[RMDB]
RNA sequence: GGGAACGACUCGAGUAGAGUCGAAAAUUCGACGUCGCAUACCAUUCGAACAAGACGACCGGCGUUAUGCCGUGCGUGUCGGCAAUGACGCGAAAGAUUUGGCCAAAUCAUAGUCAACGACAAGAACAUCAUUAUCAUCAUCAUCAUCAUCAUCAUACCUCAACGAGAGUUUCGACUCUCGUUGAGGAAAAGAAACAACAACAACAAC
Reactivity to 2A3 in 0.01 (KOAc 150mM, MgCl2 10mM, bicine 150mM(pH8.5), 24C), signal-to-noise 2, nucleotides 027 to 156: u040u020c000g060a020c070g020u000c000g000c060a080u100a110c000c000a110u110u100c040g050a140a090c030a180a020g030a080c070g070a170c020c010g060g000c000g060u110u110a100u290g000c000c000g040u030g020c030g000u080g040u030c000g000g050c030a050a170u090g000a010c020g000c000g070a000a040a000g050a030u030u040u110g090g020c000c000a040a040a020u080c100a110u080a120g040u040c020a080a040c040g070a010c060a040a070g010a050a020c010a050u110c010a020u020u110a000u180c030a020u020c000a000u000c000a020u000c010a000u000c000a030u000c000a010u010c000a050u050a120
An RNA of 207 nucleotides, treated with 2A3 and read out base by base. The data come from the RNA Mapping Database (RMDB), library OK3TST. Reactivities are rounded to 0.1 and cut off at 0 and 3.